[RMDB]
Conditions: 150 mM KOAc, 10 mM MgCl2 and 150 mM bicine (pH 8.5), 24 C.
The record gives the reactivity of an RNA of 177 nucleotides to 2A3 and DMS.
High 2A3 reactivity points to a flexible backbone, as in loops and unpaired stretches.
Values cover nucleotides 27 to 126.
It was measured as part of the RMDB library OK2TST.
For 2A3, 9,565 sequencing reads were counted.
The DMS profile rests on 13,593 reads.
Reactivities are rounded to 0.1 and cut off at 0 and 3.
RNA sequence: GGGAACGACUCGAGUAGAGUCGAAAAGUACGCUCAUUGCUGCGUGGGUGCGUAAAAUGCGGGUCAGUUGGCUGGAAAGCAAAUGCGACACACCUUUUGCCAAUAAUUUGUCUUUCAUCAGCAGCGGGUUAGCGUCUUAAUUCGUUAAGACGCUAACAAAAGAAACAACAACAACAAC
Reactivity to 2A3 in 0.01 (KOAc 150mM, MgCl2 10mM, bicine 150mM(pH8.5), 24C), signal-to-noise 6, nucleotides 027 to 126: g040u030a010c030g010c020u020c020a050u040u180g000c030u010g010c030g040u020g000g030g040u060g020c030g010u040a030a100a020a000u140g030c040g020g020g030u030c050a090g030u070u040g070g000c020u030g050g050a050a000a000g010c020a040a060a040u080g030c060g070a020c020a010c000a050c090c010u070u090u110u100g020c010c020a030a050u150a100a130u070u040u090g070u050c030u010u070u050c060a180u030c040a030g000c000a010g020c040g030g040
Reactivity to DMS in 0.01 (KOAc 150mM, MgCl2 10mM, bicine 150mM(pH8.5), 24C), signal-to-noise 8, nucleotides 027 to 126: g010u010a090c080g010c010u000c030a050u000u010g010c020u000g010c020g020u000g000g010g010u000g020c090g020u000a040a030a060a070u000g010c060g020g010g010u000c040a190g020u000u000g000g030c010u010g010g020a070a090a030g010c020a030a020a040u010g010c100g010a040c040a040c150a070c110c050u000u000u000u000g010c010c070a070a100u010a080a090u010u000u000g000u010c050u000u000u000c050a090u010c100a050g020c010a020g010c030g010g000